[RMDB]
RNA sequence: GGGAACGACUCGAGUAGAGUCGAAAAGGUGCAGGCGAUGACCGGCGGCCAGCAGCGCGUCGGCGAGGGUCUGGCCGGAAGUAUCGGUUUCCAGGGUACGGGUGUCGCUGACGGUGAGGAUGGCGAACCGCAUUACUCGAUUCGUCGAGUAAUGCGGAAAAGAAACAACAACAACAAC
Reactivity to DMS in 0.01 (KOAc 150mM, MgCl2 10mM, bicine 150mM(pH8.5), 24C), signal-to-noise 4, nucleotides 027 to 126: g010g030u000g030c040a080g010g010c030g000a080u010g000a080c020c020g000g040c020g020g010c010c020a050g010c050a150g010c020g010c030g020u010c220g000g010c020g000a070g020g010g020u010c020u000g010g020c000c020g010g000a070a080g010u010a050u000c050g010g010u000u000u000c040c050a110g000g000g000u020a050c090g000g000g020u010g020u000c040g000c030u010g010a080c090g000g010u000g010a070g000g000a090u000g000g010c050g010a100a190
Reactivity to 2A3 in 0.01 (KOAc 150mM, MgCl2 10mM, bicine 150mM(pH8.5), 24C), signal-to-noise 2, nucleotides 027 to 126: g090g020u080g050c050a020g010g040c020g090a120u090g070a090c020c000g030g030c010g000g000c020c030a030g030c040a020g070c070g000c020g180u130c030g080g010c030g010a050g060g030g020u070c020u030g030g010c000c020g000g020a040a000g070u080a060u150c050g050g000u020u090u000c040c030a060g020g040g010u080a050c030g040g020g000u070g000u030c020g010c040u050g040a050c030g000g030u080g030a040g050g020a050u030g020g010c050g050a030a020